The data come from the RNA Mapping Database (RMDB), library 15KLIB. The record gives the reactivity of an RNA of 170 nucleotides to 2A3 and DMS. DMS adducts were read by reverse transcription with MarathonRT. Conditions: 150 mM KOAc, 10 mM MgCl2 and 150 mM bicine (pH 8.5), 24 C.

RNA sequence: GGGAACGACUCGAGUAGAGUCGAAAACGCCUCGGUCCUCCCUUAGCAUCGGAGACCCGGGCCCCCUCCCAGGAAAGGGAACAGGGGGAAAUCGACCGGGUCCCGCAGAACCCGAUGGAGUCCCCCACUACGCUGCCCUUCGGGGCAGCGAAAAGAAACAACAACAACAAC
Reactivity to 2A3 in 0.01 (KOAc 150mM, MgCl2 10mM, bicine 150mM(pH8.5), 24C), signal-to-noise 2, nucleotides 027 to 129: c080g010c000c010u010c000g000g030u030c000c040u000c000c010c000u040u120a000g000c010a040u070c000g000g010a090g020a150c020c000c000g000g000g110c010c000c000c000c010u040c000c020c010a090g090g120a250a100a090g000g000g050a060a060c100a190g010g020g030g000g070a000a090a170u180c100g080a120c010c000g010g010g010u010c000c000c000g030c000a030g030a050a030c000c000c000g050a060u130g030g000a010g030u020c000c000c010c000c000a020c000u120a030
Reactivity to DMS in 0.01 (KOAc 150mM, MgCl2 10mM, bicine 150mM(pH8.5), 24C), signal-to-noise 4, nucleotides 027 to 129: c120g010c060c000u020c190g090g050u030c100c000u040c040c000c030u000u020a090g010c180a070u000c080g060g040a170g060a020c030c050c030g000g030g070c050c000c070c000c000u000c010c000c000a090g100g000a080a190a120g010g000g000a300a030c140a070g060g080g000g000g020a070a110a200u050c270g030a110c040c000g010g000g000u000c040c070c080g100c180a020g000a050a180c190c030c000g000a100u220g000g020a100g010u010c020c000c020c000c020a070c250u030a030